[RMDB]
RNA sequence: GGGAACGACUCGAGUAGAGUCGAAAAUUCAUUCAUCACCUUCGACCCAUAGCGCGGGAAGGCGCAGGAGCCGGUGGCGACGCAGUGCGGCUGGAGCAGGCUGUCGAACAUAGGAUAGACUUCCAGAAGUAAACGUAGCGUUCGCGCUACGUUUACUAAAAGAAACAACAACAACAAC
Reactivity to DMS in 0.01 (KOAc 150mM, MgCl2 10mM, bicine 150mM(pH8.5), 24C), signal-to-noise 1, nucleotides 027 to 126: u030u010c050a030u020u000c060a170u020c030a040c020c040u010u010c030g000a110c040c020c040a180u020a100g010c010g020c020g000g010g000a070a090g000g010c070g040c040a140g000g020a090g030c000c070g050g000u000g000g010c010g020a080c070g010c050a090g040u000g030c000g000g020c030u000g000g000a080g020c090a070g030g000c040u000g010u000c000g000a130a060c140a090u010a100g000g010a120u000a030g020a140c150u000u010c020c020a060g000a180
Notes
The record gives the reactivity of an RNA of 177 nucleotides to DMS. Reactivities are given for positions 27 through 126. The RNA was probed in 150 mM KOAc, 10 mM MgCl2 and 150 mM bicine (pH 8.5) at 24 C. For DMS the reverse transcriptase was MarathonRT.